The data come from the RNA Mapping Database (RMDB), library OK1LIB. Chemical mapping of a 177-nucleotide RNA with DMS and 2A3. High DMS reactivity at an A or C suggests that its Watson-Crick edge is free. Conditions: 150 mM KOAc, 10 mM MgCl2 and 150 mM bicine (pH 8.5), 24 C.
RNA sequence: GGGAACGACUCGAGUAGAGUCGAAAACGUCAGACGACGAAGUCGGUCCAUCUGCGGUAAUAGACCGACAUAGAGUUCGAAGCAGAACGAACAACCGCAGACACACGAUUGGAGUGUGAAUGAGAGACCCGUAUGGUAGUUUCGACUACCAUACGGGAAAAGAAACAACAACAACAAC
Reactivity to DMS in 0.01 (KOAc 150mM, MgCl2 10mM, bicine 150mM(pH8.5), 24C), signal-to-noise 3, nucleotides 027 to 126: c030g000u020c100a160g060a140c190g010a030c040g000a140a070g000u000c010g070g020u030c010c230a220u020c030u000g010c030g030g040u010a070a040u050a130g000a020c020c000g010a020c050a080u010a060g000a120g000u020u000c000g000a190a060g000c190a190g010a100a050c000g020a050a020c120a130a060c000c000g040c000a020g000a070c040a020c000a000c010g010a250u050u010g000g000a190g010u030g040u020g000a100a070u000g020a110g000a070g030a210
Reactivity to 2A3 in 0.01 (KOAc 150mM, MgCl2 10mM, bicine 150mM(pH8.5), 24C), signal-to-noise 4, nucleotides 027 to 126: c020g000u010c010a060g090a230c090g010a000c030g020a130a000g000u000c000g000g000u000c050c010a060u000c000u000g000c000g000g010u030a060a020u030a100g020a010c000c000g000a000c000a020u130a010g130a000g010u010u000c020g020a080a000g140c110a030g040a080a040c050g030a010a000c020a060a000c000c000g010c000a000g030a000c000a010c000a010c020g140a100u170u290g140g040a210g030u000g000u000g000a010a050u120g030a100g000a000g040a040